[RMDB]
RNA sequence: GGGAACGACUCGAGUAGAGUCGAAAAUCUGCCCUUUAGGAUUCCUCACAUGGAGAAGAGGCUUCCAUGUCCUGAGCACUUCCCUAGAGAAGAGGGGGUGAAGGAGAUAGGGAUGGACCAGUCUACCUGUUGAGAAAGAGACAGAGAAGUGGGUCUACACCACUAGGGUAUUCGUACCCUAGUGGUGAAAAGAAACAACAACAACAAC
Reactivity to 2A3 in 0.01 (KOAc 150mM, MgCl2 10mM, bicine 150mM(pH8.5), 24C), signal-to-noise 3, nucleotides 027 to 156: u050c070u070g020c020c010c000u030u070u100a080g010g000a050u080u080c020c010u040c020a040c050a120u160g110g010a120g020a200a060g050a030g020g030c010u040u010c020c020a020u030g060u030c020c000u010g050a060g090c010a000c040u160u190c010c010c020u210a180g040a020g060a250a050g050a050g030g000g010g000g020u070g010a030a020g060g010a020g010a030u100a050g000g000g030a040u030g010g020a040c000c050a030g020u010c010u040a160c020c010u050g010u060u090g060a090g090a060a110a000g090a000g000a000c010a010g020a010g060a190a020g070u110g020g050g000u010c010u040a030

An RNA of 207 nucleotides, treated with 2A3 and read out base by base.
For 2A3, 1,091 sequencing reads were counted.
Conditions: 150 mM KOAc, 10 mM MgCl2 and 150 mM bicine (pH 8.5), 24 C.